[RMDB]
RNA sequence: GGGAACGACUCGAGUAGAGUCGAAAAAUCGCCGCCAGCAACGUGGGUCUACCGUGAUGAGUGCCAGCUGGCUGCGCCACCGGGUAUCCGAGCGUGGACUGAUAGCGACGGCCGAACAACUCUGGGCUCUUUCAGGGCAUUUCGAUGCCCUGAAAGAAAAAGAAACAACAACAACAAC
Reactivity to 2A3 in 0.01 (KOAc 150mM, MgCl2 10mM, bicine 150mM(pH8.5), 24C), signal-to-noise 2, nucleotides 027 to 126: a000u080c030g010c040c020g000c000c000a040g000c000a080a060c050g090u170g050g000g060u040c100u100a100c060c060g030u120g120a120u220g020a060g040u160g070c010c000a020g030c000u030g020g000c010u030g010c010g000c010c000a050c030c000g060g000g010u100a010u040c000c000g030a050g040c020g060u030g040g000a020c020u060g030a080u150a060g020c010g020a040c000g020g000c010c010g000a060a020c040a020a020c030u060c010u040g100g050g000c010
Reactivity to DMS in 0.01 (KOAc 150mM, MgCl2 10mM, bicine 150mM(pH8.5), 24C), signal-to-noise 1, nucleotides 027 to 126: a090u000c020g080c030c050g000c000c000a030g000c050a040a050c150g060u070g000g010g040u000c080u060a110c050c000g000u030g000a040u000g000a180g000u060g000c080c000a200g000c000u000g000g000c000u000g020c060g000c140c060a040c040c020g000g000g020u000a090u000c010c030g000a130g000c090g050u000g020g000a080c180u030g000a110u000a040g020c120g000a150c110g000g000c000c020g000a050a100c120a080a090c160u010c000u000g000g000g000c060